[RMDB]
RNA sequence: GGGAACGACUCGAGUAGAGUCGAAAAGGGAUCGCGGACCGAGGGCGGAAGCCUGCUUCAGACAGGAGUAAUCCCCGCAGAAACAGGGUUUUCACCCUUCCUUUCUUCGGGUUUCCUUCCUCUGCUUGCGGCCUCGCCCGGAGUCUUCGAAUCCAGCGAGUUAUUUGUGGUUCGCCACAAAUAACUCAAAAGAAACAACAACAACAAC
Reactivity to 2A3 in 0.01 (KOAc 150mM, MgCl2 10mM, bicine 150mM(pH8.5), 24C), signal-to-noise 2, nucleotides 027 to 156: g080g000g010a000u000c010g000c030g010g000a000c000c000g000a020g000g010g000c070g040g010a030a020g010c030c090u160g000c030u000u000c010a030g000a110c120a120g000g010a030g000u040a010a040u090c000c010c000c000g000c010a010g020a020a020a130c300a110g020g010g000u120u120u280u300c130a050c010c000c000u000u010c000c000u000u000u010c010u000u030c010g000g000g000u000u010u010c010c000u030u030c000c000u000c000u020g050c210u030u030g010c000g000g000c000c010u010c010g000c000c000c000g000g000a000g000u020c000u010u000c010g000a030a090u000c010c010a000g120c090
The data come from the RNA Mapping Database (RMDB), library VIROID. This 207-nucleotide RNA was probed chemically with 2A3. The reactions ran in a buffer of 150 mM KOAc, 10 mM MgCl2 and 150 mM bicine (pH 8.5), at 24 C.